Structure probing data (DMS and 2A3) for a 177-nucleotide construct. For DMS the reverse transcriptase was MarathonRT. Reactivities are rounded to 0.1 and cut off at 0 and 3. Source: RMDB libraries RFM100 and RFMREP, as collected in RNAgym.

RNA sequence: GGGAACGACUCGAGUAGAGUCGAAAAUGACGGUUGAUUCCUCCUCCUGACUGAGUGCACAAGGCCCGCUUGGUUGAUUCGGAUACCUAUUCGAAGCCACCGGGGCCUUGUUGGCACCGCAGCAAACGUGUUUUUAAAGUUUCGACUUUAAAAACACAAAAGAAACAACAACAACAAC
Reactivity to DMS in 0.01 (KOAc 150mM, MgCl2 10mM, bicine 150mM(pH8.5), 24C), signal-to-noise 6, nucleotides 027 to 126: u020g000a130c160g010g020u000u010g010a180u010u000c010c010u000c020c010u000c020c010u030g010a060c020u000g000a300g000u000g000c010a050c010a020a020g000g000c000c000c000g000c140u020u020g010g030u010u000g000a190u000u000c000g010g010a010u000a130c300c250u040a030u010u000c000g000a010a010g010c020c050a020c070c000g010g000g000g020c000c000u000u000g000u010u010g020g010c010a010c010c020g010c020a020g010c050a030a060a060c170
Reactivity to 2A3 in 0.01 (KOAc 150mM, MgCl2 10mM, bicine 150mM(pH8.5), 24C), signal-to-noise 6, nucleotides 027 to 126: u150g040a030c090g050g000u070u070g060a160u090u050c010c000u000c000c000u010c000c010u080g070a210c000u030g010a030g020u010g000c000a000c000a000a000g000g000c000c010c010g200c140u090u110g010g010u020u060g040a120u020u000c010g010g010a010u190a300c020c060u150a060u030u010c000g000a000a000g010c020c000a010c000c020g000g000g000g000c000c000u010u000g000u000u000g010g020c000a000c000c030g010c000a010g000c000a000a040a040c070